[RMDB]
RNA sequence: GGGAACGACUCGAGUAGAGUCGAAAACAGACUGGUAGAGAAUGAUAUAGAAAAGCAUAUCAAAAGACUUUGUGUUGUGCAUUUCUGUGAGAAGAAAGAGGACAUCAAGUACACGUGUCGAUUCAUCAAGGUAUAUAAACCUGGGGAUGAGACUACCACCACUCAGACAAUUCGUUGUCUGAGUGGUAAAAGAAACAACAACAACAAC
Reactivity to DMS in 0.01 (KOAc 150mM, MgCl2 10mM, bicine 150mM(pH8.5), 24C), signal-to-noise 2, nucleotides 027 to 156: c010a110g010a140c030u000g020g000u000a050g010a080g000a140a160u010g020a120u000a060u000a100g000a080a050a050a120g030c070a070u000a060u000c030a060a080a170a300g010a030c040u000u000u010g050u000g020u000u000g030u000g020c010a160u000u000u010c000u020g000u000g010a150g020a090a050g000a030a040a130g000a090g020g020a060c030a090u000c050a030a120g000u000a040c050a090c090g010u000g020u000c010g000a240u010u000c020a060u020c030a040a000g010g020u000a080u020a180u000a090a060a080c020c000u000g010g010g010g020a080u000g000a290g010a070c010u000a100c080c010
Reactivity to 2A3 in 0.01 (KOAc 150mM, MgCl2 10mM, bicine 150mM(pH8.5), 24C), signal-to-noise 5, nucleotides 027 to 156: c010a000g100a050c040u060g010g020u070a030g010a010g050a150a110u040g030a040u080a030u060a130g120a070a150a010a010g020c030a020u020a010u070c030a030a060a080a030g080a070c060u100u100u070g040u020g020u040u060g020u050g030c070a060u000u030u020c010u030g060u070g040a060g020a100a040g030a000a030a010g050a050g000g050a000c000a040u070c060a070a010g020u040a030c090a000c100g030u050g010u030c030g020a040u030u030c010a010u010c020a130a030g070g000u030a090u010a040u070a180a200a020c000c010u000g000g020g020g000a000u010g010a000g010a010c000u030a020c000c030